Record summary
The record gives the reactivity of an RNA of 177 nucleotides to DMS and 2A3. It was measured as part of the RMDB library OK2TST. 2A3 adducts were read by reverse transcription with SuperScript II with manganese. The RNA was probed in 150 mM KOAc, 10 mM MgCl2 and 150 mM bicine (pH 8.5) at 24 C. In probing experiments dimethyl sulfate is read out at A N1 and C N3, which are open when not base-paired.
[RMDB]
RNA sequence: GGGAACGACUCGAGUAGAGUCGAAAAUGGAAAAUUUGGACGAAAUUGCAGCGGUAGAAGGCGUAGACGGCGUGUUCAUCGGCCCCGCUGACCUCAGCGCCAGCCUGGGGCACCUGGGCCACCCCGGCGUUCUGAGAAUGUUCGCAUUCUCAGAACGAAAAGAAACAACAACAACAAC
Reactivity to DMS in 0.01 (KOAc 150mM, MgCl2 10mM, bicine 150mM(pH8.5), 24C), signal-to-noise 2, nucleotides 027 to 126: u000g000g010a090a070a100a090u020u000u010g000g010a120c060g000a080a080a060u010u010g020c050a030g020c040g000g030u000a070g010a050a120g000g020c010g030u000a110g000a060c080g010g000c040g020u010g010u000u010c080a090u010c190g010g000c010c010c010c070g000c120u000g000a050c020c030u000c030a030g020c120g000c070c140a070g010c090c040u010g000g010g020g010c010a010c050c030u010g030g000g020c000c040a200c030c020c030c020g040g000
Reactivity to 2A3 in 0.01 (KOAc 150mM, MgCl2 10mM, bicine 150mM(pH8.5), 24C), signal-to-noise 1, nucleotides 027 to 126: u110g050g050a060a170a000a050u090u100u140g020g010a030c030g060a040a020a100u120u100g000c000a040g000c040g000g000u060a040g010a180a040g030g030c050g000u020a060g020a070c010g000g000c050g000u050g080u070u040c040a140u140c120g000g020c000c010c000c000g010c020u040g080a260c010c000u070c050a000g020c040g040c030c020a030g010c030c020u040g000g030g010g090c000a000c000c000u010g000g000g000c020c000a000c040c000c010c000g010g000